Record summary:
Structure probing data (DMS and 2A3) for a 177-nucleotide construct. For 2A3, 2,230 sequencing reads were counted. Conditions: 150 mM KOAc, 10 mM MgCl2 and 150 mM bicine (pH 8.5), 24 C.
RNA sequence: GGGAACGACUCGAGUAGAGUCGAAAAUACGGCGCACAUGCUUCAAUCGAUUAGCAGCAGAGUAACAUAACCAGGAGAUCAUCCAGUGAUCAGUCAGAGCCGUUAUAUCCGGAUCAUUUCGGGCGUACCGGACAAGAAUAUUCGUAUUCUUGUCCGGAAAAGAAACAACAACAACAAC
Reactivity to DMS in 0.01 (KOAc 150mM, MgCl2 10mM, bicine 150mM(pH8.5), 24C), signal-to-noise 4, nucleotides 027 to 126: u010a040c020g010g020c050g020c090a110c080a130u000g000c040u020u000c120a110a090u000c200g010a150u000u000a070g020c040a030g010c030a090g000a120g010u010a070a100c120a080u000a070a120c040c040a080g000g000a090g000a030u000c070a060u020c120c090a090g020u000g000a010u000c050a080g000u010c090a060g020a150g000c040c020g000u000u010a090u010a110u010c010c010g000g010a040u010c130a170u000u010u000c030g010g000g000c160g020u000a090
Reactivity to 2A3 in 0.01 (KOAc 150mM, MgCl2 10mM, bicine 150mM(pH8.5), 24C), signal-to-noise 2, nucleotides 027 to 126: u080a010c010g010g000c050g000c030a040c000a120u080g010c000u050u100c040a100a240u150c100g180a150u070u160a030g020c040a000g000c000a010g030a020g140u080a050a040c030a130u120a060a040c040c040a020g000g070a120g020a050u030c010a030u030c050c050a060g040u010g060a030u050c040a000g100u030c050a010g020a000g140c020c000g020u020u020a120u010a020u040c010c020g030g010a040u140c050a140u030u070u100c020g010g030g000c050g050u010a060
2A3 adducts were read by reverse transcription with SuperScript II with manganese. Source: RMDB library OK2TRN, as collected in RNAgym.